[RMDB]
RNA sequence: GGGAACGACUCGAGUAGAGUCGAAAAGAUAUGGAGUGGCCAGCGAGAACGUAUCGGAAACGAUACAGUUCGAUGAGCUGGCACUCCUAAGUCAAAAUCCGGUUGCAUCUUCGGAUGCAACCGGAAACUAUAAUGUCUGCUUCGGCAGACAUUAUAGAAAAGAAACAACAACAACAAC
Reactivity to DMS in 0.01 (KOAc 150mM, MgCl2 10mM, bicine 150mM(pH8.5), 24C), signal-to-noise 2, nucleotides 027 to 126: g000a020u000a040u030g010g010a010g020u000g010g030c000c000a010g000c000g020a110g020a020a000c010g000u000a010u000c000g010g000a010a010a030c000g000a020u000a000c000a120g030u010u020c000g000a190u030g000a300g010c000u000g000g000c000a010c010u000c000c000u000a000a060g000u000c000a090a150a110a180u000c000c010g000g030u010u000g040c000a000u000c000u000u030c280g010g000a020u000g010c000a000a000c000c000g000g010a000a010a080
Reactivity to 2A3 in 0.01 (KOAc 150mM, MgCl2 10mM, bicine 150mM(pH8.5), 24C), signal-to-noise 1, nucleotides 027 to 126: g000a010u000a010u000g000g000a000g020u050g120g300c020c000a000g010c070g180a140g000a110a000c000g000u000a000u020c000g000g020a030a020a000c020g000a000u010a000c060a060g000u010u000c020g000a250u230g100a010g000c000u000g020g000c000a000c010u010c000c000u010a010a000g020u010c000a010a000a000a300u000c000c000g020g050u000u010g040c010a000u000c030u120u100c300g230g030a000u000g000c000a010a000c000c000g010g030a000a000a000
Annotation: Structure probing data (DMS and 2A3) for a 177-nucleotide construct. The reactions ran in a buffer of 150 mM KOAc, 10 mM MgCl2 and 150 mM bicine (pH 8.5), at 24 C. 2A3 adducts were read by reverse transcription with SuperScript II with manganese. DMS adducts were read by reverse transcription with MarathonRT.